[RMDB]
RNA sequence: GGGAACGACUCGAGUAGAGUCGAAAAGAAAGAAAGAAAGUUCAUCGUUUAUCGGAAACUUUAAACUAUAACCAUUCAAACUUUUCCAGAAGUUAGUUUGAAUAGAAAUUAAAAAGAAACUUCUGAAUGACCUUGGCACCGUUCGCGGUGCCAAGAACAUAGACUAAUGGUUCGCCAUUAGUCUAUGAAAAGAAACAACAACAACAAC
Reactivity to 2A3 in 0.01 (KOAc 150mM, MgCl2 10mM, bicine 150mM(pH8.5), 24C), signal-to-noise 3, nucleotides 027 to 156: g040a010a040a000g030a020a050a020g060a040a050a000g030u070u050c080a170u080c090g040u100u130u250a160u240c030g030g050a060a030a000c000u050u030u050a130a070a020c010u050a060u060a250a060c000c010a010u010u010c000a000a000a010c000u010u000u000u010c060c000a000g000a000a000g000u000u010a000g000u000u010u000g010a010a010u050a130g010a000a060a020u180u220a040a070a040a000a000g000a000a000a010c010u000u000c010u000g010a010a070u080g020a010c010c000u000u010g000g010c000a000c030c000g050u060u060c280g000c000g100g000u010g030c000c000a000a010g000a000a000